[RMDB]
RNA sequence: GGGAACGACUCGAGUAGAGUCGAAAAAACUCUCCGAGCUGCUGGCCGAUGUCGGACCCGGUCUGGUCGUCAGCGACGAUGCCGUGACGAAUGGCGGGGCUCGCCCAAACAACGAAGAGUGGGCGCGAGAUAGCUCAGCAUUCGUGCUGAGCUAUCUAAAAGAAACAACAACAACAAC
Reactivity to DMS in 0.01 (KOAc 150mM, MgCl2 10mM, bicine 150mM(pH8.5), 24C), signal-to-noise 2, nucleotides 027 to 126: a030a030c050u020c010u000c010c000g000a050g000c010u040g010c050u000g020g020c000c000g030a070u000g010u000c000g000g020a210c010c070c040g010g000u000c160u010g000g000u000c000g000u010c090a160g010c020g000a090c030g000a110u010g000c020c030g040u000g030a150c100g000a080a040u030g000g020c100g000g010g010g000c050u000c020g010c000c000c000a040a030a100c150a000a090c100g010a080a080g000a070g000u000g010g020g000c110g000c150g000
Reactivity to 2A3 in 0.01 (KOAc 150mM, MgCl2 10mM, bicine 150mM(pH8.5), 24C), signal-to-noise 3, nucleotides 027 to 126: a000a010c030u030c020u020c010c030g000a010g000c020u200g020c030u040g190g020c000c010g070a080u220g050u040c030g040g060a150c060c050c020g010g030u010c060u130g070g020u040c010g030u030c040a070g160c060g050a040c060g020a050u200g030c030c000g040u090g030a050c020g040a120a060u060g000g010c000g000g000g010g010c000u040c000g000c000c030c000a120a220a110c110a100a060c090g160a080a050g050a030g040u030g020g010g000c040g000c010g010
Structure probing data (DMS and 2A3) for a 177-nucleotide construct. Values are in units of 0.01, from 0 to 300, in steps of 10. It was measured as part of the RMDB library OK1LIB. 2A3 adducts were read by reverse transcription with SuperScript II with manganese.